[RMDB]
RNA sequence: GGGAACGACUCGAGUAGAGUCGAAAAGCCGAUGAAUUGCCGAGAAGCCUGGCUCGAAAUCGUCGCCGCAUCGACGACGGUCCUGCCAUGAGACCGUAACGAGGACAUGUCGCCUCGAAUGGCGUCGUAUAACAUGAGUGGUUCGCCACUCAUGUAACCUAUCGAAAUUCUUCGGAAUUUCGAUAGGAAAAGAAACAACAACAACAAC
Reactivity to 2A3 in 0.01 (KOAc 150mM, MgCl2 10mM, bicine 150mM(pH8.5), 24C), signal-to-noise 5, nucleotides 027 to 156: g060c010c010g010a030u100g060a050a260u150u090g040c050c060g040a040g040a110a020g030c040c050u080g050g000c010u010c060g070a100a090a040u020c010g010u000c010g010c060c050g080c050a080u140c040g010a020c020g000a010c000g000g000u000c000c020u050g020c010c010a040u040g020a010g000a080c010c020g020u070a000a000c010g010a000g000g020a020c050a120u220g030u160c110g020c020c000u000c000g010a010a010u020g000g050c000g020u050c060g000u050a110u060a250a000c000a010u010g000a010g010u000g030g020u070u130c190g030c070c000a000c000u020c020a000u000g000u000a010a010
Reactivity to DMS in 0.01 (KOAc 150mM, MgCl2 10mM, bicine 150mM(pH8.5), 24C), signal-to-noise 2, nucleotides 027 to 156: g030c030c020g000a070u000g000a070a100u000u000g020c040c060g000a160g000a100a090g020c040c020u000g000g070c010u000c030g010a040a050a060u000c050g020u000c000g000c010c040g000c160a240u010c040g040a020c000g000a020c000g020g060u000c000c010u000g010c010c060a070u000g010a100g010a040c010c000g000u010a040a090c080g000a090g040g020a060c050a160u000g040u000c050g030c000c010u000c020g040a060a090u000g040g020c000g050u010c010g030u000a110u000a090a060c010a010u000g010a030g030u000g030g010u000u000c300g030c030c000a020c000u000c000a010u000g000u010a030a090
The record gives the reactivity of an RNA of 207 nucleotides to 2A3 and DMS. For 2A3, 4,023 sequencing reads were counted. For DMS, 4,633 sequencing reads were counted. DMS adducts were read by reverse transcription with MarathonRT. The reactions ran in a buffer of 150 mM KOAc, 10 mM MgCl2 and 150 mM bicine (pH 8.5), at 24 C. Reactivities are rounded to 0.1 and cut off at 0 and 3.